[RMDB]
RNA sequence: GGGAACGACUCGAGUAGAGUCGAAAAUCAUCUCUACAUGUGGUACACAGACAGCCUGCCAGAUGUGUUGAUCAGGGAGAUCGGGGGAUGCUUUGAACUGAGCGUGGAGGAGGCAGGCAGCAUGUGGCCAUACGACGCAUUUCGAUGCGUCGUAUGGAAAAGAAACAACAACAACAAC
Reactivity to DMS in 0.01 (KOAc 150mM, MgCl2 10mM, bicine 150mM(pH8.5), 24C), signal-to-noise 3, nucleotides 027 to 126: u020c120a120u010c030u000c030u010a060c100a090u000g020u020g000g020u020a070c090a050c100a060g010a100c170a110g010c000c000u000g010c000c010a110g000a140u010g000u000g010u000u000g000a080u010c050a140g000g000g020a140g000a070u010c040g000g000g000g000g000a110u000g010c070u000u010u020g010a090a120c180u000g000a050g010c030g000u010g000g000a150g010g020a120g000g000c000a040g000g010c020a040g010c120a050u010g010u000g010g000
Reactivity to 2A3 in 0.01 (KOAc 150mM, MgCl2 10mM, bicine 150mM(pH8.5), 24C), signal-to-noise 2, nucleotides 027 to 126: u030c010a040u010c030u010c020u080a020c010a120u090g030u030g040g050u100a120c100a000c010a050g140a110c020a020g040c000c000u000g000c000c010a050g040a250u120g130u030g100u110u210g070a090u090c040a030g040g090g020a170g010a070u110c020g020g000g000g010g000a030u060g070c030u040u070u150g080a160a110c150u080g020a020g040c030g010u120g020g050a100g070g000a040g000g000c010a010g030g000c000a020g000c010a000u020g000u000g030g000
Source: RMDB library OK2TRN, as collected in RNAgym. An RNA of 177 nucleotides, treated with DMS and 2A3 and read out base by base. The reactions ran in a buffer of 150 mM KOAc, 10 mM MgCl2 and 150 mM bicine (pH 8.5), at 24 C. DMS adducts were read by reverse transcription with MarathonRT. For 2A3, 2,005 sequencing reads were counted. For DMS, 2,290 sequencing reads were counted.